[RMDB]
RNA sequence: GGGAACGACUCGAGUAGAGUCGAAAAAUAUUAAUUCUCUUUAUUGGAUUUUGGUAUUAAAUGAUGCAUGCAUCAUGAACAAUAGAAGCUCUUAGUGGGCCAUUUUUGGUAAGCAGAACUGGCGAUGACAAUAUGUGCUUUUCGAAGCACAUAUUGUAAAAGAAACAACAACAACAAC
Reactivity to DMS in 0.01 (KOAc 150mM, MgCl2 10mM, bicine 150mM(pH8.5), 24C), signal-to-noise 6, nucleotides 027 to 126: a060u020a070u030u010a070a090u000u000c020u000c030u020u010u030a100u020u010g010g000a070u010u010u010u000g020g010u010a050u010u010a050a120a030u000g010a020u000g000c050a100u010g000c010a010u000c010a010u000g000a090a130c110a040a050u010a080g010a110a120g010c070u010c050u010u010a080g010u010g000g000g010c020c020a020u000u010u000u010u000g000g010u030a040a110g000c040a030g000a040a040c060u000g000g000c030g000a100u010g000
Reactivity to 2A3 in 0.01 (KOAc 150mM, MgCl2 10mM, bicine 150mM(pH8.5), 24C), signal-to-noise 4, nucleotides 027 to 126: a000u160a030u070u140a080a060u020u020c000u000c000u070u050u050a210u070u080g100g000a100u080u090u050u090g070g030u150a090u100u120a190a140a050u060g000a010u010g010c090a060u130g010c000a020u010c010a010u050g050a050a010c010a020a020u050a120g160a150a000g020c000u030c010u150u060a070g030u150g130g050g000c010c010a030u050u070u030u050u030g070g030u090a070a050g060c000a000g010a030a040c020u020g020g000c020g080a120u160g030
Structure probing data (DMS and 2A3) for a 177-nucleotide construct. Reactivities are given for positions 27 through 126. For 2A3 the reverse transcriptase was SuperScript II with manganese.